[RMDB]
RNA sequence: GGGAACGACUCGAGUAGAGUCGAAAAGAUAUGGAGCUUGAUACUGUGCGACGAAGUCGGAAACGACAGAGCACUGUAUCAAGAGCUCCUAAGUCAAAACUCUAAUGUACUUCGGUACAUUAGAGAACCUUUAAUAGGUGUUCGCACCUAUUAAAGGAAAAGAAACAACAACAACAAC
Reactivity to DMS in 0.01 (KOAc 150mM, MgCl2 10mM, bicine 150mM(pH8.5), 24C), signal-to-noise 4, nucleotides 027 to 126: g000a030u000a300u020g000g020a020g020c000u000u000g010a020u010a010c000u000g000u000g000c000g030a220c200g000a070a100g000u000c010g010g010a080a080a220c010g000a020c000a030g000a200g010c000a000c000u000g000u000a010u010c010a020a070g010a080g020c010u000c010c010u010a010a100g010u000c030a080a100a110a160c010u000c000u000a010a010u000g000u000a000c000u000u010c210g020g010u000a000c000a010u000u000a000g000a000g000a040a090
Reactivity to 2A3 in 0.01 (KOAc 150mM, MgCl2 10mM, bicine 150mM(pH8.5), 24C), signal-to-noise 3, nucleotides 027 to 126: g040a010u090a050u190g020g000a000g010c000u030u010g020a010u000a010c010u020g010u020g050c050g170a280c060g070a300a030g000u010c010g000g000a080a070a060c000g000a000c010a000g010a010g000c000a000c000u000g000u000a010u000c000a000a000g020a000g010c000u020c020c000u010a140a000g040u030c030a010a010a070a300c000u000c000u010a020a000u010g000u000a010c000u030u090c220g080g000u000a000c000a010u020u010a010g010a010g000a000a010
The record gives the reactivity of an RNA of 177 nucleotides to DMS and 2A3. Source: RMDB library TTRDEL, as collected in RNAgym. Conditions: 150 mM KOAc, 10 mM MgCl2 and 150 mM bicine (pH 8.5), 24 C. 2A3 adducts were read by reverse transcription with SuperScript II with manganese. The 2A3 profile rests on 6,712 reads.